[RMDB]
RNA sequence: GGGAACGACUCGAGUAGAGUCGAAAACCUUUGUGGAUGCCCGUCUUGAGCUGAGUUCUACUUGUAAACUUCUGGUUUCUUGUAGUUCCAGUCAAAGAAACAUCCAGCAACUUUUUUGGUUGUAUAGCUUAGAUAUAUGCUUCGGCAUAUAUCUAAGAAAAGAAACAACAACAACAAC
Reactivity to 2A3 in 0.01 (KOAc 150mM, MgCl2 10mM, bicine 150mM(pH8.5), 24C), signal-to-noise 2, nucleotides 027 to 126: c010c000u020u060u170g110u030g000g000a000u010g020c060c070c080g060u040c010u000u000g020a000g010c000u010g000a010g060u020u020c000u010a020c000u020u050g200u300a010a010a010c010u150u150c190u300g100g000u000u000u010c000u000u010g010u000a000g020u010u020c000c000a000g020u070c020a000a060a000g020a000a030a000c000a000u020c000c010a000g090c010a030a000c030u110u180u130u060u150u300g110g000u020u010g000u000a150u150a100g040
Reactivity to DMS in 0.01 (KOAc 150mM, MgCl2 10mM, bicine 150mM(pH8.5), 24C), signal-to-noise 2, nucleotides 027 to 126: c010c010u000u010u010g020u010g000g000a000u000g010c070c180c300g000u000c020u000u000g010a300g010c000u000g010a090g000u000u000c000u000a000c000u000u010g000u010a010a000a000c010u010u020c300u000g020g000u000u000u000c000u010u000g000u000a000g010u000u000c000c010a000g010u000c030a110a020a020g010a110a170a180c010a000u000c010c000a080g010c010a010a020c030u000u000u000u000u010u000g000g010u000u000g000u000a070u010a090g010